This 207-nucleotide RNA was probed chemically with DMS and 2A3. For 2A3, 7,824 sequencing reads were counted. Values cover nucleotides 27 to 156. It was measured as part of the RMDB library M2RFPK. The reactions ran in a buffer of 150 mM KOAc, 10 mM MgCl2 and 150 mM bicine (pH 8.5), at 24 C. For DMS the reverse transcriptase was MarathonRT.
RNA sequence: GGGAACGACUCGAGUAGAGUCGAAAAACGAGGUACGCCUCGAAAAUAUGACCGGUGUCAUAGCCUCUAGCACACAGAGGUCGCGUGAGUUCAACUCCCCCCCUUUUCCGAGGGUAUCGGAAACCAAAAAACACAAUUUGGUUCGCCAAAUUGUGAAGUGACAAAUUAUGUUCGCAUAAUUUGUCACAAAAGAAACAACAACAACAAC
Reactivity to DMS in 0.01 (KOAc 150mM, MgCl2 10mM, bicine 150mM(pH8.5), 24C), signal-to-noise 2, nucleotides 027 to 156: a100c010g010a040g030g030u010a080c180g040c020c020u000c050g000a020a010a050a140u000a030u000g000a060c000c030g000g000u000g010u000c010a050u000a050g030c020c000u000c020u000a130g020c120a110c120a120c110a100g010a050g020g040u000c040g030c070g030u010g020a060g020u010u000c050a080a260c060u000c000c000c010c000c000c000c030u000u000u000u030c020c000g010a030g040g000g010u000a050u000c010g000g000a020a020a090c150c070a000a030a080a100a070a130c000a020c000a010a000u010u000u000g010g000u010u000c300g010c000c000a010a010a010u000u000g000u000g000a000a040
Reactivity to 2A3 in 0.01 (KOAc 150mM, MgCl2 10mM, bicine 150mM(pH8.5), 24C), signal-to-noise 6, nucleotides 027 to 156: a000c010g000a010g000g020u050a030c150g090c010c010u010c000g030a100a030a020a020u090a050u050g010a010c050c090g150g020u140g030u120c030a050u040a040g000c010c010u010c020u030a060g070c080a030c000a010c020a150g020a010g030g010u020c030g010c020g060u110g050a090g040u110u200c070a100a120c090u020c000c000c000c000c000c000c030u020u080u000u000c000c000g000a000g000g010g020u080a020u000c000g000g000a000a000a000c020c020a010a050a010a050a050a010c000a000c000a000a000u000u000u000g010g000u020u010c030g000c050c000a000a000a000u010u000g000u000g000a020a010